[RMDB]
RNA sequence: GGGAACGACUCGAGUAGAGUCGAAAAAUCGCAAGAUCGGCCCCGCCACGUGGGCGGCAGCGUGGACGGCCCCGAUCACGUGACCGCGACCGAGUGGACUCUGAUCGCCGUCGCCGUCGUCACGGCACAAUAACACGCAAUUCGUUGCGUGUUAUUGAAAAGAAACAACAACAACAAC
Reactivity to 2A3 in 0.01 (KOAc 150mM, MgCl2 10mM, bicine 150mM(pH8.5), 24C), signal-to-noise 8, nucleotides 027 to 126: a000u070c040g000c060a110a030g010a050u030c020g060g000c020c000c000c010g000c010c010a070c050g030u110g060g070g010c010g020g000c020a020g020c030g060u060g080g020a090c000g010g010c020c030c020c030g010a010u010c020a010c120g010u010g030a030c000c010g000c010g030a090c120c070g020a070g040u070g040g030a050c030u020c060u160g080a140u040c030g010c030c000g020u010c020g000c030c020g040u090c020g030u030c010a010c020g020g010c040a010
Reactivity to DMS in 0.01 (KOAc 150mM, MgCl2 10mM, bicine 150mM(pH8.5), 24C), signal-to-noise 9, nucleotides 027 to 126: a060u000c030g020c190a120a140g010a030u000c030g000g010c080c140c000c100g010c030c030a060c070g020u000g020g010g010c020g000g010c030a110g010c030g020u000g010g010a070c040g010g010c070c230c090c030g010a020u000c010a090c110g010u000g000a060c020c040g010c020g000a090c140c140g010a100g040u000g010g010a070c040u010c080u010g000a060u000c030g000c030c040g010u000c040g000c000c020g010u000c070g010u010c030a040c020g010g010c120a250